[RMDB]
RNA sequence: GGGAACGACUCGAGUAGAGUCGAAAAUUCAAAUAUUUAAGUUACUGUGCUGUCACAAAACCUUAAAUUCUGUGAUGGGUCACAUGCAUCUAAUGAAUACAUACAGGACAAUUUGUUGUUUAUUGUCCAAAGGAAGAAACUUCGGUUUCUUCCUUUGAAAAGAAACAACAACAACAAC
Reactivity to DMS in 0.01 (KOAc 150mM, MgCl2 10mM, bicine 150mM(pH8.5), 24C), signal-to-noise 3, nucleotides 027 to 126: u000u010c060a060a140a200u010a040u010u020u000a060a080g000u010u010a060c040u010g000u000g020c030u020g020u000c000a000c000a000a010a030a030c100c090u030u030a070a080a290u000u000c030u010g010u000g010a000u000g020g000g010u020c020a010c020a020u010g010c050a020u000c040u000a070a040u030g000a050a020u010a060c180a080u030a150c190a110g000g000a010c000a000a040u000u020u000g020u020u010g000u010u000u000a090u010u000g000u000c010
Reactivity to 2A3 in 0.01 (KOAc 150mM, MgCl2 10mM, bicine 150mM(pH8.5), 24C), signal-to-noise 4, nucleotides 027 to 126: u070u020c010a000a020a010u180a130u100u150u170a150a040g030u040u100a030c040u030g010u010g070c000u010g010u020c000a010c000a010a020a050a120c000c010u160u290a070a110a080u130u030c050u030g010u010g000a010u000g000g080g110u170c020a000c000a020u130g040c010a020u030c050u120a120a050u100g110a020a010u110a080c090a010u130a050c040a110g020g010a000c000a010a020u000u000u130g000u000u000g020u020u040u000a030u050u020g000u000c000